[RMDB]
RNA sequence: GGGAACGACUCGAGUAGAGUCGAAAACUGCAGGCCGUGCUGCGCGCCAGGCGCCGCGGCCAGCGCUCUGACUUGCGCCUUAUGCGCAGAGGCGUGGAGCGUUGUUGAGGUCAGGCCCGCGCCGAGGACUAUAUCAAUAGUUCGCUAUUGAUAUAGUAAAAGAAACAACAACAACAAC
Reactivity to DMS in 0.01 (KOAc 150mM, MgCl2 10mM, bicine 150mM(pH8.5), 24C), signal-to-noise 9, nucleotides 027 to 126: c060u000g010c050a090g020g010c010c010g030u000g010c190u010g030c010g020c040g010c160c220a140g010g010c010g020c010c050g010c020g010g000c020c010a010g010c010g010c040u000c020u000g010a060c090u000u010g010c000g010c000c160u010u010a100u010g010c020g010c020a090g000a050g000g010c050g020u000g010g000a050g010c010g010u000u000g010u010u010g010a130g010g000u010c040a070g010g000c010c010c030g010c070g010c030c060g000a100g000g010
Reactivity to 2A3 in 0.01 (KOAc 150mM, MgCl2 10mM, bicine 150mM(pH8.5), 24C), signal-to-noise 8, nucleotides 027 to 126: c030u060g020c040a060g000g020c010c000g000u040g030c150u080g000c020g000c010g060c080c170a260g210g000c010g000c000c010g000c000g000g000c000c000a000g000c010g010c000u010c020u040g130a140c040u070u140g010c010g020c010c030u260u260a150u300g040c040g000c030a040g030a050g190g020c080g040u140g020g010a070g000c030g020u050u080g080u070u210g130a050g020g040u090c030a020g030g050c000c000c030g010c020g000c020c020g050a090g050g050